[RMDB]
RNA sequence: GGGAACGACUCGAGUAGAGUCGAAAAGAUAUGGAAUGCAAGGGAGAAGUGUGUCGGAAACGACACCCUUCAUCGAUCUUGACAUUCCUAAGUCAAAAUCUACUCCGGGCUUCGGCCCGGAGUAGAAGGAAGUCAAAUAGUUCGCUAUUUGACUUCCAAAAGAAACAACAACAACAAC
Reactivity to 2A3 in 0.01 (KOAc 150mM, MgCl2 10mM, bicine 150mM(pH8.5), 24C), signal-to-noise 1, nucleotides 027 to 126: g000a000u020a000u070g010g020a030a000u010g010c000a000a000g040g030g020a180g000a020a030g010u020g000u010g010u000c000g010g030a030a000a000c010g000a000c000a000c000c000c010u010u020c020a060u300c010g030a020u020c000u040u040g070a120c000a010u010u000c000c010u000a000a010g010u000c020a050a060a010a300u030c010u000a000c000u000c000c060g130g000g060c050u120u260c300g180g000c080c000c000g020g000a000g000u000a000g000a000a000
Reactivity to DMS in 0.01 (KOAc 150mM, MgCl2 10mM, bicine 150mM(pH8.5), 24C), signal-to-noise 1, nucleotides 027 to 126: g000a010u000a010u000g000g000a030a000u000g010c000a030a020g010g000g030a030g000a040a010g010u000g020u000g000u010c010g030g000a010a010a040c000g010a000c000a000c000c060c000u000u000c000a300u010c170g000a020u010c000u010u000g010a240c000a000u000u010c010c010u010a000a070g010u000c020a140a120a150a120u000c010u000a000c010u010c010c000g000g020g010c000u000u020c300g010g050c000c000c000g040g010a000g000u000a010g000a010a090